Chemical mapping of a 207-nucleotide RNA with DMS and 2A3. Conditions: 150 mM KOAc, 10 mM MgCl2 and 150 mM bicine (pH 8.5), 24 C. For DMS, 2,400 sequencing reads were counted. For DMS the reverse transcriptase was MarathonRT. 2A3 adducts were read by reverse transcription with SuperScript II with manganese.
RNA sequence: GGGAACGACUCGAGUAGAGUCGAAAAUGAAAUGAUGACCCAGGCACCACCUCUCUGGAGGGAUGUGAUACACUGAGCUGCCUUCUGCUGCUUGUGUCUCAGUUGGCCUGUCCAUGAGGCUUGGCCAUUUAUUUUCAUCCUGAGGAAGUAAAGGAUACCUAAUAUGCAGCUUCGGCUGCAUAUUAGGAAAAGAAACAACAACAACAAC
Reactivity to DMS in 0.01 (KOAc 150mM, MgCl2 10mM, bicine 150mM(pH8.5), 24C), signal-to-noise 1, nucleotides 027 to 156: u020g010a020a050a100u000g000a040u000g010a120c010c000c010a090g040g020c040a090c040c040a040c000c030u000c040u000c100u050g020g020a300g060g010g040a040u000g030u030g000a180u000a070c040a030c040u010g020a050g040c000u000g030c060c060u000u000c110u000g020c000u010g020c020u020u000g020u000g000u010c000u000c030a110g000u020u000g020g030c030c010u000g000u010c010c020a150u020g000a140g020g000c020u000u000g030g030c010c010a050u010u000u020a010u000u000u000u000c010a050u010c020c050u000g010a130g000g000a050a100g030u000a020a080a080g050g020a210u000a200
Reactivity to 2A3 in 0.01 (KOAc 150mM, MgCl2 10mM, bicine 150mM(pH8.5), 24C), signal-to-noise 2, nucleotides 027 to 156: u100g000a030a000a040u070g020a010u130g020a020c020c000c000a020g060g000c050a050c030c000a050c000c000u050c000u000c090u180g030g050a020g020g040g030a030u060g050u000g030a020u000a020c040a000c060u130g060a000g000c010u020g050c100c000u170u220c150u190g030c020u030g010c020u060u010g000u000g000u010c000u010c020a080g060u130u070g050g000c000c000u090g110u040c020c010a140u240g050a110g040g040c030u050u050g020g000c020c000a010u050u090u120a130u010u050u020u070c030a040u020c000c030u060g010a040g040g050a060a080g030u180a050a070a000g090g020a080u100a040